The record gives the reactivity of an RNA of 177 nucleotides to DMS and 2A3. DMS adducts were read by reverse transcription with MarathonRT. Conditions: 150 mM KOAc, 10 mM MgCl2 and 150 mM bicine (pH 8.5), 24 C.
RNA sequence: GGGAACGACUCGAGUAGAGUCGAAAAGGGGAUUGUUCCUACCAUUGUCUCUAGUGCUUACCGCGAUAUUUUCAUAGACAGUUUUGGUAAGACAUUUAUUGAUUUUUGCGGGUCUUGGGGAUCGUUACAUCUUAUACUGCUUCGGCAGUAUAAGAUGAAAAGAAACAACAACAACAAC
Reactivity to DMS in 0.01 (KOAc 150mM, MgCl2 10mM, bicine 150mM(pH8.5), 24C), signal-to-noise 5, nucleotides 027 to 126: g000g010g000g000a130u000u000g000u000u000c020c020u000a110c100c060a080u000u010g000u000c010u000c080u000a060g000u000g010c060u000u010a090c100c040g020c080g010a060u000a050u010u010u010u010c160a070u010a060g000a070c090a100g010u010u000u000u000g010g010u010a040a060g000a060c010a040u000u010u000a050u010u000g000a060u000u000u000u000u010g000c110g010g000g010u000c070u000u010g010g020g000g010a090u010c130g000u000u010a140
Reactivity to 2A3 in 0.01 (KOAc 150mM, MgCl2 10mM, bicine 150mM(pH8.5), 24C), signal-to-noise 3, nucleotides 027 to 126: g050g000g000g020a030u050u100g030u070u040c000c000u010a050c000c000a060u070u080g020u000c010u000c010u060a050g070u040g070c030u020u080a060c010c040g030c010g030a010u010a100u160u170u090u130c070a070u090a090g060a080c060a040g020u050u120u180u150g060g010u030a040a010g010a040c010a000u130u230u120a040u060u110g040a040u030u000u030u110u220g060c070g030g000g000u030c050u100u090g000g010g010g010a010u040c020g000u030u080a040